This 207-nucleotide RNA was probed chemically with 2A3. It was measured as part of the RMDB library OK3TST. The reactions ran in a buffer of 150 mM KOAc, 10 mM MgCl2 and 150 mM bicine (pH 8.5), at 24 C.
RNA sequence: GGGAACGACUCGAGUAGAGUCGAAAACGAUGAUGAUGUGAUUGCUGUUAAUAAACCAGUAGGUGUCGCAGCGCAUCCCACCCUGGGAUGGGAAGGUCCAACUGUCAUCGGUGGCUUGGCCGCUGCUGGUUUCCGUAUUUCUACGUCAGGUCCACCAUCCCUACCCAUGAUUCGUCAUGGGUAGGGAAAAAGAAACAACAACAACAAC
Reactivity to 2A3 in 0.01 (KOAc 150mM, MgCl2 10mM, bicine 150mM(pH8.5), 24C), signal-to-noise 1, nucleotides 027 to 156: c100g000a000u090g010a000u020g000a010u130g020u030g050a100u160u030g010c010u010g030u240u110a220a170u080a230a080a050c020c030a000g000u030a060g070g140u060g010u080c020g020c030a010g010c070g000c020a010u000c070c000c030a060c060c070c130u160g000g000g020a000u020g000g020g040a000a020g030g010u050c000c000a050a000c050u030g020u000c080a020u080c100g000g020u000g000g020c030u040u000g000g000c000c010g010c090u040g000c010u020g000g140u020u050u040c030c000g050u130a150u080u180u030c070u170a030c110g020u000c010a040g000g010u050c000c000a000c000c010a020